[RMDB]
RNA sequence: GGGAACGACUCGAGUAGAGUCGAAAAGCGAGAUGACAUCACAAUUCGUAAUCUUUGCGAGACCGAAGAGGUCGUUAAACCAACACACACAGAAGUCUAUGACUCUAUAUGUGAGUGUCGGUGCGAAAUGUGCUCGCAAGUUCGCUUGCGAGCACAUAAAAGAAACAACAACAACAAC
Reactivity to 2A3 in 0.01 (KOAc 150mM, MgCl2 10mM, bicine 150mM(pH8.5), 24C), signal-to-noise 2, nucleotides 027 to 126: g060c000g020a010g030a010u080g040a080c020a070u130c060a020c060a120a130u200u100c050g050u030a090a050u050c030u010u090u280g060c010g030a070g010a060c030c070g000a140a070g130a050g000g070u020c010g000u010u230a090a010a000c000c000a000a000c000a000c030a000c000a000c000a000g080a120a000g070u030c020u250a260u300g000a010c020u070c020u010a120u020a010u280g030u010g010a070g020u010g000u000c040g000g020u060g010c010g000a110a000
Reactivity to DMS in 0.01 (KOAc 150mM, MgCl2 10mM, bicine 150mM(pH8.5), 24C), signal-to-noise 1, nucleotides 027 to 126: g040c020g000a040g010a040u000g020a100c110a040u010c150a100c180a070a160u000u000c080g000u010a150a040u000c040u000u000u020g010c100g000a190g000a020c070c000g000a110a100g040a210g020g020u000c020g020u000u020a060a110a010c000c000a020a010c000a010c000a180c020a000c000a010g010a020a020g000u010c000u000a180u020g000a020c000u010c120u000a100u010a160u020g020u000g010a140g020u000g000u000c010g010g020u000g000c060g010a040a050
An RNA of 177 nucleotides, treated with 2A3 and DMS and read out base by base. 2A3 is a SHAPE reagent: it acylates the 2'-hydroxyl of flexible nucleotides of all four kinds. The data come from the RNA Mapping Database (RMDB), library OK2TRN.